[RMDB]
RNA sequence: GGGAACGACUCGAGUAGAGUCGAAAAGAAAUUACGUUUCCUUUACACUUUUCAAACCGGGAUCAAGAGAAGCAAAGCAUCCCUCAUAUCCACGAUGGAGGGUGUCGUGGAGUAUACUGUACCAAAAAGAGCGAACACGGCUUCGGCCGUGUUCGAACCGAUAGUGCAUGUUCGCAUGCACUAUCGGAAAAGAAACAACAACAACAAC
Reactivity to 2A3 in 0.01 (KOAc 150mM, MgCl2 10mM, bicine 150mM(pH8.5), 24C), signal-to-noise 2, nucleotides 027 to 156: g010a000a070a020u170u090a030c020g010u010u030u020c020c000u030u040u060a030c010a050c030u090u100u060u090c080a100a120a080c010c020g030g000g010a030u030c040a120a030g030a040g020a210a020g050c050a060a020a070g080c020a080u070c020c020c000u020c030a100u120a040u060c020c000a000c020g020a020u030g060g010a010g070g040g000u010g000u000c000g000u000g030g050a030g010u000a000u010a050c110u100g060u100a030c030c000a000a050a000a160a000g080a090g090c000g000a000a000c000a000c000g000g010c000u040u040c080g050g000c030c000g000u000g000u000u000c000g000a000a000